Source: RMDB library OK2TRN, as collected in RNAgym. Structure probing data (DMS and 2A3) for a 177-nucleotide construct. The 2A3 profile rests on 598 reads.

RNA sequence: GGGAACGACUCGAGUAGAGUCGAAAAGUCUAGCGAAUGGAUCCCACCCGGGAUACACGCAAGUCGCGAAUUAAGCCGACCGGCCAAGGUCAAUAGCAGAACUCAACUGCAUGAGUAAGCUAGACGAACUAGGCAUGAUCUUCGGAUCAUGCCUAGUAAAAGAAACAACAACAACAAC
Reactivity to DMS in 0.01 (KOAc 150mM, MgCl2 10mM, bicine 150mM(pH8.5), 24C), signal-to-noise 1, nucleotides 027 to 126: g020u030c010u000a010g000c010g000a200a170u000g010g000a010u000c000c000c000a290c300c040c130g000g000g000a070u000a030c060a040c200g000c030a140a090g030u030c000g000c050g010a180a070u000u000a150a240g000c070c100g000a020c050c100g000g030c100c250a100a240g010g000u000c030a050a010u000a100g030c030a000g000a000a010c070u040c120a010a010c080u000g000c030a100u010g080a070g010u020a080a180g000c010u000a000g000a010c010g030a090
Reactivity to 2A3 in 0.01 (KOAc 150mM, MgCl2 10mM, bicine 150mM(pH8.5), 24C), signal-to-noise 1, nucleotides 027 to 126: g000u000c020u050a000g000c000g070a100a100u150g090g050a050u030c010c000c010a010c030c000c000g000g020g000a020u060a030c020a000c080g050c060a000a000g190u100c030g020c030g060a100a190u180u050a280a000g110c060c000g070a020c030c030g110g060c000c000a120a100g020g080u050c010a060a070u160a040g100c000a010g010a210a110c080u080c210a040a110c060u060g090c050a090u050g010a030g100u030a010a020g000c000u020a000g010a040c060g020a040

Overview:
DMS adducts were read by reverse transcription with MarathonRT.